About this RNA: The record gives the reactivity of an RNA of 177 nucleotides to DMS and 2A3. For DMS, 1,603 sequencing reads were counted. The reactions ran in a buffer of 150 mM KOAc, 10 mM MgCl2 and 150 mM bicine (pH 8.5), at 24 C. It was measured as part of the RMDB library RFM100. The 2A3 profile rests on 455 reads.
RNA sequence: GGGAACGACUCGAGUAGAGUCGAAAAGGCGUACAUGGAUGGUAAAAUACCGGUUGCCACUGUCUCUAAUGAGUCAAGCGCUUCAAGUAAUACAGUUAAACCAGUUGCAAGUGCAUGGAAACGUAAUGAGGUAAUCCAGAUUCGUCUGGAUUACCUCAAAAGAAACAACAACAACAAC
Reactivity to DMS in 0.01 (KOAc 150mM, MgCl2 10mM, bicine 150mM(pH8.5), 24C), signal-to-noise 2, nucleotides 027 to 126: g000g000c010g010u000a120c080a070u010g010g000a010u020g000g020u040a080a140a100a020u040a020c080c090g000g040u000u000g020c020c040a110c080u040g000u000c010u000c000u010a110a120u040g000a000g000u000c060a030a120g030c240g010c020u020u020c090a110a060g000u010a040a160u000a080c120a000g000u010u000a000a090a120c020c010a050g010u070u000g000c240a020a100g110u050g000c170a170u020g000g000a040a000a000c080g000u050a220a160u010
Reactivity to 2A3 in 0.01 (KOAc 150mM, MgCl2 10mM, bicine 150mM(pH8.5), 24C), signal-to-noise 2, nucleotides 027 to 126: g030g000c050g040u000a010c030a120u140g030g040a050u060g030g100u100a030a110a090a000u170a100c000c000g010g000u050u030g100c000c070a000c030u040g040u030c000u000c000u080a250a130u240g150a080g050u000c000a000a100g000c000g020c140u100u030c010a030a000g030u000a100a110u220a050c030a030g000u030u050a040a090a090c040c000a000g010u010u000g230c170a120a080g000u100g040c160a040u000g020g000a020a270a000c000g030u100a040a240u100